[RMDB]
RNA sequence: GGGAACGACUCGAGUAGAGUCGAAAAUAUCAAUAAGAAUUCCGGUCUGUUCCGGAGAAACCAAGUGGAAUGCUACGUGCAUCAAUGCACGUAGCUAAAGACCCGAAGGCUAGCAAACGCUAGCCAACAUGGGUCGAGGAUUCGUCCUCGACCCAUGAAAAGAAACAACAACAACAAC
Reactivity to DMS in 0.01 (KOAc 150mM, MgCl2 10mM, bicine 150mM(pH8.5), 24C), signal-to-noise 1, nucleotides 027 to 126: u040a050u010c130a000a180u010a180a220g000a150a120u070u000c000c000g000g040u040c130u000g000u000u040c050c000g020g000a020g050a170a090a260c270c040a140a180g000u050g000g010a100a050u020g000c020u000a000c000g000u000g000c000a060u000c300a120a090u000g000c000a000c020g000u000a000g000c000u000a060a070a070g040a240c000c000c070g030a030a020g000g000c000u000a000g000c000a130a060a100c220g060c000u000a000g000c020c010a000a000
Reactivity to 2A3 in 0.01 (KOAc 150mM, MgCl2 10mM, bicine 150mM(pH8.5), 24C), signal-to-noise 1, nucleotides 027 to 126: u150a010u150c110a070a080u260a120a070g020a080a030u160u000c000c010g110g060u000c260u300g170u160u030c000c000g050g000a000g030a010a060a000c040c000a210a000g030u120g110g030a290a060u040g000c000u000a000c010g000u000g000c000a010u160c030a220a070u170g000c000a050c000g000u000a000g000c000u000a000a000a000g000a010c000c000c000g050a030a030g000g080c000u060a000g000c050a240a300a080c110g000c000u000a000g000c000c000a000a000